Notes: Chemical mapping of a 177-nucleotide RNA with 2A3 and DMS. The reactions ran in a buffer of 150 mM KOAc, 10 mM MgCl2 and 150 mM bicine (pH 8.5), at 24 C. Reactivities are rounded to 0.1 and cut off at 0 and 3.
RNA sequence: GGGAACGACUCGAGUAGAGUCGAAAAGGCGCGCGCCGGGACCUCCCACCGUCGGGGCGUCUGGCGGCUCGGAGGGCCAACGGGGCCGUGACCGGUAAAUGCGCUCCCUUGGCCGAGCGCGGAUGGAAGUAUUAUGACUGUUCGCAGUCAUAAUACUAAAAGAAACAACAACAACAAC
Reactivity to 2A3 in 0.01 (KOAc 150mM, MgCl2 10mM, bicine 150mM(pH8.5), 24C), signal-to-noise 3, nucleotides 027 to 126: g030g000c010g000c010g000c030g030c010c000g010g010g010a030c000c000u010c010c010c010a010c010c010g020u010c000g000g000g050g300c110g200u100c020u010g010g010c010g010g000c070u050c050g000g010a020g010g020g000c010c000a040a090c040g040g000g060g000c040c020g010u010g040a200c000c000g000g010u090a070a080a060u160g000c010g000c010u020c010c020c000u080u160g110g000c060c050g000a010g000c010g000c050g000g010a070u100g050g070a080
Reactivity to DMS in 0.01 (KOAc 150mM, MgCl2 10mM, bicine 150mM(pH8.5), 24C), signal-to-noise 6, nucleotides 027 to 126: g010g000c040g020c080g020c070g010c010c010g020g010g010a050c020c010u000c010c000c140a110c010c020g010u000c020g000g010g020g030c240g010u010c010u000g000g010c020g000g010c050u010c210g010g010a050g000g000g000c010c020a100a110c100g010g000g000g020c050c030g010u000g000a160c010c010g010g010u000a040a080a090u010g010c020g010c000u000c010c040c100u000u010g010g020c080c100g000a020g010c020g020c010g000g010a160u010g010g000a220

For DMS, 12,514 sequencing reads were counted.